The record gives the reactivity of an RNA of 177 nucleotides to DMS. Values cover nucleotides 27 to 126. The reactions ran in a buffer of 150 mM KOAc, 10 mM MgCl2 and 150 mM bicine (pH 8.5), at 24 C.
[RMDB]
RNA sequence: GGGAACGACUCGAGUAGAGUCGAAAACUCGGUCUCUUCAGGUCAGUGAUCUACUUAUGGAUGAAGCCAUUAUUCAACUUCAUCGAAGUGGUUACAAAAUUGACGAUGCACUCAGUGAGUUGAAUGAGUGCAGGUAGCCAUUCGUGGCUACCUGCACAAAAGAAACAACAACAACAAC
Reactivity to DMS in 0.01 (KOAc 150mM, MgCl2 10mM, bicine 150mM(pH8.5), 24C), signal-to-noise 1, nucleotides 027 to 126: c000u010c050g070g020u000c030u010c020u010u010c080a040g030g010u020c050a030g020u000g010a010u000c000u000a070c010u000u000a070u020g030g020a020u000g010a010a020g020c060c130a150u030u020a180u000u000c180a110a200c000u000u000c000a010u000c000g020a030a030g010u010g000g030u020u090a050c070a080a050a090a110u040u010g010a020c050g020a150u000g010c020a000c010u010c010a060g000u020g010a080g020u010u000g000a130a090u000g000a050